[RMDB]
RNA sequence: GGGAACGACUCGAGUAGAGUCGAAAACUUUCCAGUGAAUUACACUGGAACCUUUGUCAUAAAUCAGGUGAUUGCAUAUGUGUGGGUGAUAUGGUUUGGAUUUGUGUCCCUGCCCAAAUCUCAUGUUUGAAUUGUAAUCUGCAGUGUUGGGGGAGGGCAGUAAGAAGCCAUUCGUGGCUUCUUACUGAAAAGAAACAACAACAACAAC
Reactivity to DMS in 0.01 (KOAc 150mM, MgCl2 10mM, bicine 150mM(pH8.5), 24C), signal-to-noise 1, nucleotides 027 to 156: c030u000u000u010c000c010a020g000u010g000a210a170u010u010a190c010a000c000u000g020g000a020a010c060c030u000u000u040g030u020c060a090u010a050a150a090u020c060a070g010g030u000g010a060u020u020g030c060a090u000a040u010g010u010g050u000g000g000g040u000g030a110u000a060u010g010g000u000u000u000g000g010a100u000u000u000g040u010g000u000c040c030c020u010g070c030c010c030a000a030a070u010c060u010c060a070u000g010u000u010u000g020a050a160u010u000g020u010a070a110u000c060u000g010c030a080g020u000g030u000u000g020g020g010g050g040a050g040g010g030
Reactivity to 2A3 in 0.01 (KOAc 150mM, MgCl2 10mM, bicine 150mM(pH8.5), 24C), signal-to-noise 2, nucleotides 027 to 156: c030u020u050u000c000c010a010g000u000g080a150a200u210u120a120c000a000c000u020g000g020a010a010c000c010u090u200u110g070u050c060a080u110a200a180a120u120c090a030g000g060u010g070a100u110u150g020c060a040u050a030u230g080u050g030u030g030g020g040u030g020a040u020a050u180g050g090u040u050u030g050g010a050u040u050u060g020u020g030u000c000c010c000u010g090c010c000c040a030a140a040u080c070u000c030a080u100g020u040u080u100g120a100a050u150u030g050u040a040a130u020c030u090g010c030a010g000u020g000u130u130g030g000g010g000g030a020g030g000g060